[RMDB]
RNA sequence: GGGAACGACUCGAGUAGAGUCGAAAAGAUAUGGACGACCAACAUGCCGUUUGACGGAUGUCGGAAACGACAUCCCGAGGAACUACAUGGGUCGUCCUAAGUCAAAAUCGUCGGUUCGCCGACGAAACGAUAUAGACGGGUUCGCCCGUCUAUAUCGAAAAGAAACAACAACAACAAC
Reactivity to 2A3 in 0.01 (KOAc 150mM, MgCl2 10mM, bicine 150mM(pH8.5), 24C), signal-to-noise 5, nucleotides 027 to 126: g030a020u070a020u150g000g000a010c010g010a020c010c010a080a300c020a060u020g040c050c060g050u020u040u090g030a010c010g000g000a000u000g010u010c010g030g030a040a060a050c010g000a000c000a000u000c000c000c000g000a030g080g130a050a020c030u040a010c040a000u010g020g020g000u000c000g000u000c000c000u010a000a000g000u000c010a010a010a010a250u040c000g010u000c010g000g050u030u070c300g020c110c000g010a000c000g000a010a000a000
Reactivity to DMS in 0.01 (KOAc 150mM, MgCl2 10mM, bicine 150mM(pH8.5), 24C), signal-to-noise 7, nucleotides 027 to 126: g010a040u000a300u000g000g000a020c010g020a010c010c010a080a150c020a010u000g010c050c100g000u000u000u000g010a300c300g000g000a020u000g010u000c000g000g000a080a100a140c010g000a010c000a000u000c000c000c000g000a210g010g010a010a010c010u000a050c010a010u000g000g000g010u000c000g030u000c000c000u000a010a070g010u010c030a080a070a090a110u000c010g000u000c000g010g000u000u010c240g010c000c010g000a000c000g000a010a020a090